[RMDB]
RNA sequence: GGGAACGACUCGAGUAGAGUCGAAAAGUAUCCCUAGAUGAUAAAACACCGCACAUGGCUCGUAAGAGCGGUAAAAUUAGCAAGUAAUGCAAAUUACGCGAGGUAACGCAUGGCCUAGGCUCGUUAGAAAAGGGAGAAUCCUUCGGGAUUCUCCCAACAGCUAAUGAUUGUUCGCAAUCAUUAGCUGAAAAGAAACAACAACAACAAC
Reactivity to 2A3 in 0.01 (KOAc 150mM, MgCl2 10mM, bicine 150mM(pH8.5), 24C), signal-to-noise 3, nucleotides 027 to 156: g030u030a090u070c030c000c000u030a070g040a160u110g040a030u160a140a070a030a010c080a020c020c020g060c020a040c030a110u170g100g000c010u030c040g050u100a070a070g030a010g050c010g000g020u010a010a020a050a090u110u100a010g030c070a080a010g070u100a100a050u090g000c060a050a000a190u100u050a030c050g020c020g040a010g010g070u050a050a010c030g020c030a060u090g030g030c020c000u030a030g020g060c000u010c040g040u030u060a030g090a070a070a070a040g030g000g000a000g000a000a010u000c000c000u040u050c160g000g010g010a000u010u000c000u010c000c000c000a000a000
Reactivity to DMS in 0.01 (KOAc 150mM, MgCl2 10mM, bicine 150mM(pH8.5), 24C), signal-to-noise 3, nucleotides 027 to 156: g020u010a090u000c010c000c000u020a100g030a170u010g020a200u010a030a080a110a150c050a090c030c030g040c050a100c080a110u010g000g000c070u020c040g000u000a100a180g000a120g020c020g020g050u000a060a070a120a120u010u000a130g040c030a100a130g010u000a080a080u000g010c090a050a080a120u000u000a050c060g000c050g000a120g010g020u010a010a070c080g000c100a090u000g020g000c010c030u010a060g030g000c020u000c050g000u000u010a130g010a070a070a130a180g020g010g020a040g010a000a030u000c000c000u010u000c290g060g010g000a030u000u000c000u000c000c000c000a000a020
Structure probing data (2A3 and DMS) for a 207-nucleotide construct. For DMS the reverse transcriptase was MarathonRT. The 2A3 profile rests on 1,506 reads. The RNA was probed in 150 mM KOAc, 10 mM MgCl2 and 150 mM bicine (pH 8.5) at 24 C. Source: RMDB library M2RFPK, as collected in RNAgym.